[RMDB]
RNA sequence: GGGAACGACUCGAGUAGAGUCGAAAACAUGUCACGUGACAUUCUAUAGUAGAUCGGUAUACACCUAUAACGUGCCCGUGCGAGGUAUACACGGAGAGGCACUAAGCGUGACUCAAUGACGUAGAGCGAUUGUAACUCCAUUCGUGGAGUUAUAGUCAAAAGAAACAACAACAACAAC
Reactivity to DMS in 0.01 (KOAc 150mM, MgCl2 10mM, bicine 150mM(pH8.5), 24C), signal-to-noise 9, nucleotides 027 to 126: c100a090u010g010u000c010a040c060g010u000g000a150c110a100u000u000c070u000a090u010a100g020u010a060g010a080u000c080g010g010u000a070u000a070c080a100c110c070u000a080u010a070a110c110g010u000g010c020c010c040g010u000g010c090g010a100g020g010u000a050u010a050c020a060c030g010g010a170g010a100g010g000c020a020c010u010a120a240g010c060g010u000g000a020c010u000c120a080a120u000g010a080c120g010u000a070g010a120g010c180
Reactivity to 2A3 in 0.01 (KOAc 150mM, MgCl2 10mM, bicine 150mM(pH8.5), 24C), signal-to-noise 9, nucleotides 027 to 126: c040a050u120g000u010c010a000c040g040u080g030a010c020a100u140u020c070u090a130u080a160g130u030a030g040a140u090c070g020g040u080a100u030a130c100a060c030c020u040a050u040a240a050c050g000u010g010c010c010c010g020u040g040c050g060a120g060g140u150a100u040a110c080a010c020g040g030a150g020a080g150g000c010a000c000u010a070a010g010c010g010u000g000a000c000u000c010a060a130u140g070a040c080g060u100a060g020a010g170c060

The data come from the RNA Mapping Database (RMDB), library OK2TRN. The record gives the reactivity of an RNA of 177 nucleotides to DMS and 2A3. High 2A3 reactivity points to a flexible backbone, as in loops and unpaired stretches. The DMS profile rests on 153,429 reads. Reactivities are given for positions 27 through 126.